[RMDB]
RNA sequence: GGGAACGACUCGAGUAGAGUCGAAAAACCAAUGGAGGGUGAGCCUUGUGUAGUUUAGUCUGCUGUUACAUGGUUUAAGUUUGAGUGGGUUUAGUUAUAAUCUAUGUGGCGAUUCAAGAUUGGUACAGGACGAACAUUCCUUCGGGGAUGUUCGUCCAAAAGAAACAACAACAACAAC
Reactivity to DMS in 0.01 (KOAc 150mM, MgCl2 10mM, bicine 150mM(pH8.5), 24C), signal-to-noise 1, nucleotides 027 to 126: a140c030c000a190a070u060g000g010a080g000g000g000u020g000a060g000c030c030u000u000g000u010g000u010a000g010u000u000u000a170g040u000c050u000g000c070u010g000u000u000a030c100a050u000g020g000u010u000u010a030a060g000u010u000u020g000a040g010u000g000g040g010u020u030u000a040g020u010u030a070u000a080a010u000c040u000a080u000g000u020g000g000c060g020a040u000u010c080a030a150g000a100u000u000g000g010u060a040c090a090
Reactivity to 2A3 in 0.01 (KOAc 150mM, MgCl2 10mM, bicine 150mM(pH8.5), 24C), signal-to-noise 1, nucleotides 027 to 126: a000c030c000a020a000u060g020g010a010g000g000g010u030g030a000g000c000c000u030u000g010u010g020u090a020g020u000u040u030a000g050u000c000u000g030c060u060g050u010u110a040c000a000u050g020g060u060u070u000a070a020g000u060u060u030g010a000g010u000g000g070g030u010u040u070a010g000u000u010a100u020a130a120u000c060u060a050u040g040u010g000g000c000g000a000u040u110c040a080a010g050a210u010u010g000g030u010a060c020a050

Structure probing data (DMS and 2A3) for a 177-nucleotide construct. DMS adducts were read by reverse transcription with MarathonRT. Conditions: 150 mM KOAc, 10 mM MgCl2 and 150 mM bicine (pH 8.5), 24 C. For 2A3 the reverse transcriptase was SuperScript II with manganese. The data come from the RNA Mapping Database (RMDB), library OK1LIB.